[RMDB]
RNA sequence: GGGAACGACUCGAGUAGAGUCGAAAAUCAAGCAAAACCCCAAAACCUUACACUGAGAGCAUUUAGCCUGAUUACUCAUUAAAUCAAAUCAGGCAAUAGAGAGAAACUCGAGAGGUGAAAACCCCACAUAACGAUCUAGGCUUCGGCCUAGAUCGAAGACUAUAUAGUGCUUCGGCACUAUAUAGUCAAAAGAAACAACAACAACAAC
Reactivity to 2A3 in 0.01 (KOAc 150mM, MgCl2 10mM, bicine 150mM(pH8.5), 24C), signal-to-noise 2, nucleotides 027 to 156: u080c020a060a000g110c020a050a070a100a200c070c030c080c080a090a110a050a060c090c000u130u190a050c100a050c070u110g010a020g000a020g100c060a050u040u020u110a070g040c000c000u020g000a020u030u110a100c090u080c100a030u110u300a110a090a130u150c080a010a080a000u000c000a000g090g010c000a000a000u000a000g010a000g000a000g010a050a120a030c010u080c030g050a070g000a010g090g040u010g010a070a050a000a000c040c000c010c000a030c010a120u200a170a000c010g000a020u000c000u020a020g000g030c000u020u080c230g100g020c010c000u020a000g000a000u000c000g000a000a000

Description
Conditions: 150 mM KOAc, 10 mM MgCl2 and 150 mM bicine (pH 8.5), 24 C. Structure probing data (2A3) for a 207-nucleotide construct. It was measured as part of the RMDB library M2RFPK.